[RMDB]
An RNA of 207 nucleotides, treated with DMS and 2A3 and read out base by base.
For 2A3, 3,603 sequencing reads were counted.
Values cover nucleotides 27 to 156.
The RNA was probed in 150 mM KOAc, 10 mM MgCl2 and 150 mM bicine (pH 8.5) at 24 C.
For DMS the reverse transcriptase was MarathonRT.
2A3 adducts were read by reverse transcription with SuperScript II with manganese.

RNA sequence: GGGAACGACUCGAGUAGAGUCGAAAAGCUCUGGAAUUGAGGCCCCUCUAACAAUAAUCCAAAACAACUUCGCAGAGUAAUCUGCCGAAUCGUAGGAUGCCCAUUACUAUCUAUUUUUGGAGCAUCUAAAACUGUCAGUGCUUCGGCACUGACAGAACCUGAUAUGUAAGUUCGCUUACAUAUCAGGAAAAGAAACAACAACAACAAC
Reactivity to DMS in 0.01 (KOAc 150mM, MgCl2 10mM, bicine 150mM(pH8.5), 24C), signal-to-noise 2, nucleotides 027 to 156: g050c030u010c010u000g020g000a190a080u000u010g010a060g010g010c040c030c010c030u010c020u000a140a170c060a100a110u000a080a130u000c020c030a070a060a120a120c080a050a120c090u000u000c070g000c000a020g000a050g020u000a100a110u000c020u000g000c040c010g000a040a080u000c110g030u000a250g010g000a060u000g030c010c010c010a070u000u010a070c120u010a150u010c130u000a150u000u000u000u000u000g010g010a100g050c000a010u000c020u000a030a050a090a140c020u000g030u000c000a030g030u000g030c020u000u010c300g040g030c000a000c010u010g010a020c000a000g040a030a090
Reactivity to 2A3 in 0.01 (KOAc 150mM, MgCl2 10mM, bicine 150mM(pH8.5), 24C), signal-to-noise 5, nucleotides 027 to 156: g020c010u000c020u030g030g070a150a080u140u060g010a030g010g040c010c000c020c000u090c100u140a120a100c080a060a090u190a030a020u040c040c010a030a090a050a110c030a060a070c050u040u030c020g000c000a000g000a010g030u100a100a130u000c000u000g040c090c080g030a020a020u080c060g030u070a050g020g020a000u000g000c010c000c000a020u030u030a040c060u060a100u190c030u120a260u150u110u000u020u010g010g010a100g010c000a000u000c000u040a020a030a020a070c000u000g000u010c010a000g000u000g000c000u020u050c100g050g000c000a000c010u000g000a000c000a010g000a010a020